The data come from the RNA Mapping Database (RMDB), library OK2TST. An RNA of 177 nucleotides, treated with DMS and 2A3 and read out base by base. For 2A3 the reverse transcriptase was SuperScript II with manganese. The 2A3 profile rests on 1,800 reads. The reactions ran in a buffer of 150 mM KOAc, 10 mM MgCl2 and 150 mM bicine (pH 8.5), at 24 C. DMS adducts were read by reverse transcription with MarathonRT. Reactivities are given for positions 27 through 126.
[RMDB]
RNA sequence: GGGAACGACUCGAGUAGAGUCGAAAACGGGUCAGGGUCACGAGGAACGCCCGGAAGCACCGCGUGUCCAAGCACCGCAUCGUCGCCGCUAUGCGCCACUGCGGUGUUCCGGUCAUUCAGGAAGAUGUGAUCCGGAAAAUUUCGAUUUUCCGGAUCAAAAAGAAACAACAACAACAAC
Reactivity to DMS in 0.01 (KOAc 150mM, MgCl2 10mM, bicine 150mM(pH8.5), 24C), signal-to-noise 3, nucleotides 027 to 126: c100g000g030g020u000c050a090g020g000g000u000c050a050c040g000a150g000g000a030a040c080g000c130c010c000g000g000a040a050g000c010a010c010c010g000c010g010u000g010u010c030c020a100a030g010c020a080c220c070g000c020a130u010c250g020u000c030g010c190c120g000c030u010a080u000g000c100g010c080c020a020c040u010g040c000g010g010u000g020u000u010c020c010g000g000u010c040a070u000u000c030a090g000g000a120a110g000a070u000g010
Reactivity to 2A3 in 0.01 (KOAc 150mM, MgCl2 10mM, bicine 150mM(pH8.5), 24C), signal-to-noise 2, nucleotides 027 to 126: c020g000g000g070u090c070a070g000g070g000u080c050a010c080g040a060g080g060a080a050c040g000c000c000c070g020g030a020a020g120c020a010c030c000g000c010g000u010g020u020c000c030a030a000g020c020a010c100c030g000c020a200u200c050g300u180c020g020c050c000g000c030u100a130u200g000c020g020c030c020a030c070u180g010c030g000g000u010g000u010u000c000c010g000g000u000c000a040u030u050c010a020g120g050a130a070g070a100u140g070